The record gives the reactivity of an RNA of 207 nucleotides to 2A3. The reactions ran in a buffer of 150 mM KOAc, 10 mM MgCl2 and 150 mM bicine (pH 8.5), at 24 C.
RNA sequence: GGGAACGACUCGAGUAGAGUCGAAAAGAAAGAAAGAAAGAAACCGUCUCUGUUAGUCUCACGGUAACCACGUUGAAAUCGCAACGAAAGAAGCUCGCACUCAACUUCAACGGCUUAACGAGUGCAAAAAACUUACUGAUCUUCGGAUCAGUAAGAACUGUAAUCGGUACUUCGGUACCGAUUACAGAAAAGAAACAACAACAACAAC
Reactivity to 2A3 in 0.01 (KOAc 150mM, MgCl2 10mM, bicine 150mM(pH8.5), 24C), signal-to-noise 1, nucleotides 027 to 156: g060a010a060a000g150a050a130a000g040a070a120a030g030a060a120a000c000c000g010u000c020u000c030u090g150u090u090a090g010u070c050u050c080a000c000g010g000u000a010a040c050c050a020c050g000u000u020g100a060a150a190u210c130g000c080a000a010c010g030a060a000a050g010a020a000g020c030u170c300g010c040a000c000u000c010a030a030c010u020u020c060a050a020c030g000g010c000u040u000a030a000c030g000a000g020u020g000c000a050a050a050a050a050a050c000u000u000a000c000u000g000a000u000c000u030u030c120g150g000a000u000c030a000g000u000a000a010g000a030a000